[RMDB]
RNA sequence: GGGAACGACUCGAGUAGAGUCGAAAAGGAAUCCCCAGCACUCCCCUUUCCACACUCCUUCCCCCCUGUGGGGCCCCCCCAUAAGAUGGCGAGAUCUCCACUCAUUGGGUCCUUCGUCCAUCUCCUUAUAACUGAUACAGUUCGCUGUAUCAGUUAUAAAAGAAACAACAACAACAAC
Reactivity to DMS in 0.01 (KOAc 150mM, MgCl2 10mM, bicine 150mM(pH8.5), 24C), signal-to-noise 1, nucleotides 027 to 126: g040g000a150a130u000c040c000c020c090a110g000c050a110c030u000c020c020c000c050u010u000u000c020c010a100c120a080c050u000c020c060u010u000c010c000c030c050c020c110u000g020u040g000g020g010g050c000c000c000c000c000c000c000a040u000a010a050g000a020u000g000g000c040g000a060g010a020u000c020u000c000c020a120c260u000c120a120u010u010g000g010g010u000c070c060u000u000c000g010u000c000c000a020u000c010u020c090c140u000u000